[RMDB]
RNA sequence: GGGAACGACUCGAGUAGAGUCGAAAAUCGGCAAGCAGCGCGCCGUGGACGGAGUGAGCCUGGCCGUGCCGCGCGGCUCGGUCUACGGCGUGCUCGGACCGAACGGCGCGGGCAAGACGACGACCAAGAUCAGCAUGGUAUUCGUACCAUGCUGAUCAAAAGAAACAACAACAACAAC
Reactivity to 2A3 in 0.01 (KOAc 150mM, MgCl2 10mM, bicine 150mM(pH8.5), 24C), signal-to-noise 1, nucleotides 027 to 126: u030c000g000g000c030a000a080g000c040a040g090c050g000c000g010c020c020g000u000g020g020a030c100g060g010a010g020u050g040a050g020c010c040u020g020g000c030c130g110u150g020c010c020g110c050g030c120g020g030c000u010c020g120g000u030c010u010a000c000g000g000c000g000u000g020c010u010c000g000g010a040c000c000g030a030a030c020g050g000c000g000c010g060g040g000c020a010a050g020a030c020g020a000c020g030a010c010c020a030a040
Reactivity to DMS in 0.01 (KOAc 150mM, MgCl2 10mM, bicine 150mM(pH8.5), 24C), signal-to-noise 3, nucleotides 027 to 126: u000c010g020g020c040a150a160g020c120a050g010c000g010c020g010c010c020g000u000g000g000a050c020g000g000a060g020u000g010a130g020c000c020u000g000g030c010c270g020u000g010c040c040g030c300g020c040g010g010c000u000c010g010g010u000c010u000a020c040g000g000c010g010u000g000c010u010c010g010g010a110c000c000g000a050a080c090g000g010c030g010c040g000g010g000c060a060a150g000a060c040g000a070c060g010a160c030c060a110a140
The record gives the reactivity of an RNA of 177 nucleotides to 2A3 and DMS. The reactions ran in a buffer of 150 mM KOAc, 10 mM MgCl2 and 150 mM bicine (pH 8.5), at 24 C. For 2A3 the reverse transcriptase was SuperScript II with manganese. Source: RMDB library OK2TST, as collected in RNAgym. The 2A3 profile rests on 3,623 reads.